[RMDB]
RNA sequence: GGGAACGACUCGAGUAGAGUCGAAAAGCACGUCCGGUAAGUCCCGUGCGAACACUUGAGCUCCGGCUUGACCGCUCUUGUGGAUUAGGACGUUCUAGCUCCGGCUUGGCCGCUAGUUCGUCCGAAACGCGCUCCUAAAUUUCGAUUUAGGAGCGCGAAAAGAAACAACAACAACAAC
Reactivity to DMS in 0.01 (KOAc 150mM, MgCl2 10mM, bicine 150mM(pH8.5), 24C), signal-to-noise 2, nucleotides 027 to 126: g000c120a020c010g060u020c080c000g010g000u000a050a100g020u000c020c010c000g030u020g000c060g110a130a110c010a020c020u010u000g000a060g010c040u030c300c110g000g050c030u010u000g020a070c130c100g060c040u020c060u000u040g030u000g080g000a300u000u020a170g000g030a070c010g090u000u000c000u000a000g070c070u030c110c030g000g030c250u050u030g020g010c090c050g040c000u020a010g000u000u000c000g000u000c000c010g010a000a080a160
Reactivity to 2A3 in 0.01 (KOAc 150mM, MgCl2 10mM, bicine 150mM(pH8.5), 24C), signal-to-noise 3, nucleotides 027 to 126: g030c030a020c070g030u010c040c000g010g060u160a140a040g120u120c020c000c000g000u050g010c010g040a100a050c010a010c010u020u020g000a010g010c030u060c060c060g060g020c050u170u210g120a270c000c020g000c000u000c000u010u060g030u010g010g060a060u100u120a040g000g000a000c000g000u000u000c000u000a010g000c000u110c140c010g260g000c220u170u300g110g020c030c000g000c000u000a000g010u000u020c000g000u000c000c000g000a000a000a000
Chemical mapping of a 177-nucleotide RNA with DMS and 2A3. The data come from the RNA Mapping Database (RMDB), library OK1LIB. The 2A3 profile rests on 1,749 reads. The DMS profile rests on 1,701 reads.